Overview
Chemical mapping of a 177-nucleotide RNA with 2A3 and DMS. For DMS, 7,133 sequencing reads were counted. The data come from the RNA Mapping Database (RMDB), library TTRINS. Conditions: 150 mM KOAc, 10 mM MgCl2 and 150 mM bicine (pH 8.5), 24 C.
RNA sequence: GGGAACGACUCGAGUAGAGUCGAAAAGAUAUGGACGUAUUGGAGGUUGGCUCGCGUUGAAAUACGCAGAUUCGGAAACGAAUCUGCGUAUGGAGCGAGCUCAACCGAUGAAGAUACGUCCUAAGUCGAAGAUAUUUCAGUUCGCUGAAAUAUCUUCAAAAGAAACAACAACAACAAC
Reactivity to 2A3 in 0.01 (KOAc 150mM, MgCl2 10mM, bicine 150mM(pH8.5), 24C), signal-to-noise 2, nucleotides 027 to 126: g080a030u140a100u230g000g000a000c000g010u000a000u010u040g050g010a030g010g000u000u010g000g000c000u010c000g000c000g160u190u080g030a050a040a010u010a000c010g000c000a000g010a010u000u000c000g000g020a060a090a090c000g010a020a000u000c000u010g000c000g000u000a000u010g000g010a000g000c000g000a000g010c010u020c020a000a010c000c020g020a010u000g000a000a010g010a000u010a010c000g000u010c000c000u010a030a010g050u040c100
Reactivity to DMS in 0.01 (KOAc 150mM, MgCl2 10mM, bicine 150mM(pH8.5), 24C), signal-to-noise 4, nucleotides 027 to 126: g010a100u010a300u000g000g000a010c000g040u000a010u000u000g000g010a070g020g030u000u010g010g000c000u000c010g020c010g020u010u010g000a210a120a010u000a000c000g010c010a010g010a010u000u010c000g020g000a140a110a230c010g010a030a000u000c010u000g000c000g010u010a000u000g000g000a120g010c000g000a020g010c010u020c010a000a000c000c000g000a060u000g010a180a220g000a010u000a000c000g000u000c000c000u000a020a070g010u010c090